Conditions: 150 mM KOAc, 10 mM MgCl2 and 150 mM bicine (pH 8.5), 24 C. Chemical mapping of a 207-nucleotide RNA with 2A3. 2A3 adducts were read by reverse transcription with SuperScript II with manganese.
[RMDB]
RNA sequence: GGGAACGACUCGAGUAGAGUCGAAAAUAACUCGACUGGGGCCAAAACGAAACAGUGGCACUACCCCUCUCCGUAUUCACGGGGGGCGUUAAGUGUCACAUCGAUAGAUCAAGGUGCCUACAAGCGAAGUGGGUCAUCGUGGGGUCGCCCGUACGAGGAGGCUAAUCUCGUUCGCGAGAUUAGCCUCAAAAGAAACAACAACAACAAC
Reactivity to 2A3 in 0.01 (KOAc 150mM, MgCl2 10mM, bicine 150mM(pH8.5), 24C), signal-to-noise 1, nucleotides 027 to 156: u040a060a000c010u000c010g030a030c000u010g000g000g000g020c000c000a100a060a220a230c050g060a050a030a070c170a100g010u000g000g000c000a000c000u010a030c000c000c000c080u020c050u000c010c000g010u010a170u210u290c240a020c050g020g000g000g000g000g000c010g000u030u100a050a030g000u000g020u030c000a000c000a010u010c000g070a060u040a110g060a010u090c010a040a040g010g010u030g010c010c000u000a010c000a050a120g110c090g150a180a060g030u050g000g000g000u130c040a000u040c000g010u080g000g090g010g020u050c000g140c110c000c000g000u010a030c000g000a000g020